[RMDB]
RNA sequence: GGGAACGACUCGAGUAGAGUCGAAAAGAUAUGGACGGAAGUCUCGCCACAAUUAACAGGACCCCUAUGUCGGAAACGACAUAGAACUCCUGUUAAUUGUGGAACUACGAGUCACCGUCCUAAGUCACAUAAUUAGCAUCUUCGGAUGCUAAUUAUGAAAAGAAACAACAACAACAAC
Reactivity to DMS in 0.01 (KOAc 150mM, MgCl2 10mM, bicine 150mM(pH8.5), 24C), signal-to-noise 5, nucleotides 027 to 126: g010a050u000a300u010g000g010a000c000g010g010a160a190g020u000c000u010c010g010c010c000a010c010a020a010u000u010a000a010c000a010g000g000a040c300c210c300c020u000a010u000g010u000c000g000g000a150a100a290c000g000a010c000a010u000a000g020a090a230c300u000c010c000u010g000u000u000a000a000u000u000g010u000g000g010a010a000c140u020a300c030g010a010g030u000c030a220c020c000g000u000c000c000u010a000a060g000u010c040a300